[RMDB]
RNA sequence: GGGAACGACUCGAGUAGAGUCGAAAAGAUAUGGAGUUAAGUAGGGAGCUGUCUAUCGGAAACGAUAGUAGCGAAGAACUACGAUGACUCCUAAGUCAAAAGCUAGGUCUGUUCGCAGACCUAGCAACUAACAUCAUAUGUUCGCAUAUGAUGUUAGAAAAGAAACAACAACAACAAC
Reactivity to DMS in 0.01 (KOAc 150mM, MgCl2 10mM, bicine 150mM(pH8.5), 24C), signal-to-noise 8, nucleotides 027 to 126: g000a040u000a300u010g000g000a020g020u000u000a090a300g010u000a020g010g000g020a140g010c010u000g010u030c000u000a010u000c000g000g000a080a070a180c010g020a010u000a010g020u000a010g010c000g020a080a140g020a120a140c010u000a010c000g010a210u010g010a010c000u000c000c000u000a020a110g000u010c030a120a100a100a150g010c010u000a000g000g000u000c000u010g010u000u010c260g020c010a010g000a010c000c000u000a000g010c000a010a050
Reactivity to 2A3 in 0.01 (KOAc 150mM, MgCl2 10mM, bicine 150mM(pH8.5), 24C), signal-to-noise 7, nucleotides 027 to 126: g030a000u040a030u110g000g010a000g010u030u050a150a030g000u030a020g020g100g080a070g020c010u030g150u300c000u050a010u010c000g040g000a040a010a010c000g000a000u000a010g010u010a000g000c000g040a140a020g040a040a020c010u010a000c020g050a110u300g020a010c000u000c000c000u000a050a010g010u000c030a030a050a090a120g000c000u000a000g000g000u000c000u010g080u090u150c300g030c140a000g000a000c000c000u000a000g000c000a000a000